Chemical mapping of a 207-nucleotide RNA with DMS and 2A3.
RNA sequence: GGGAACGACUCGAGUAGAGUCGAAAAAGUGGACGUUUAUUGUUGCCGAGCAUUGUUUGUUUUGUCCACGCUCGGACUUCCUUCUGGCGAAAGCCAGUUCACAGGCAGCUAGCCGAACCCAGCCCGUAGCAGCAACCUAGAGGCUAGCGCUACGAUAACGAUUACCUAAUUUCGAUUAGGUAAUCGUAAAAGAAACAACAACAACAAC
Reactivity to DMS in 0.01 (KOAc 150mM, MgCl2 10mM, bicine 150mM(pH8.5), 24C), signal-to-noise 2, nucleotides 027 to 156: a060g020u000g000g010a040c040g050u000u000u010a060u020u000g000u000u000g020c000c020g030a080g040c040a170u000u000g010u000u010u000g040u010u000u010u010g010u000c030c040a080c040g010c060u000c050g020g030a110c080u000u000c020c030u000u000c020u000g000g000c000g030a130a120a220g010c000c000a040g020u000u010c070a100c060a100g020g040c030a130g000c040u000a060g020c010c010g000a070a100c020c000c020a130g000c010c060c040g030u000a040g000c010a090g000c010a050a080c000c030u000a150g000a300g030g020c020u000a050g020c030g020c030u000a020c040g000a070u000a100
Reactivity to 2A3 in 0.01 (KOAc 150mM, MgCl2 10mM, bicine 150mM(pH8.5), 24C), signal-to-noise 2, nucleotides 027 to 156: a000g020u000g000g020a010c070g040u060u130u150a110u140u090g070u080u100g080c080c060g030a030g040c090a130u070u140g080u190u090u050g100u050u100u110u090g000u000c010c000a000c010g010c020u000c010g050g020a060c010u060u040c000c030u040u050c000u030g010g000c010g090a110a000a010g030c000c000a000g000u110u120c080a060c020a030g020g020c010a000g050c060u090a010g010c020c030g010a040a040c010c020c000a000g030c050c040c020g020u040a010g050c110a000g000c010a010a040c020c020u120a100g010a070g090g000c020u060a040g020c030g010c020u030a000c030g030a040u090a170
DMS (dimethyl sulfate) methylates the pairing face of unpaired adenines and cytosines. It was measured as part of the RMDB library OK3TST. For DMS, 4,453 sequencing reads were counted.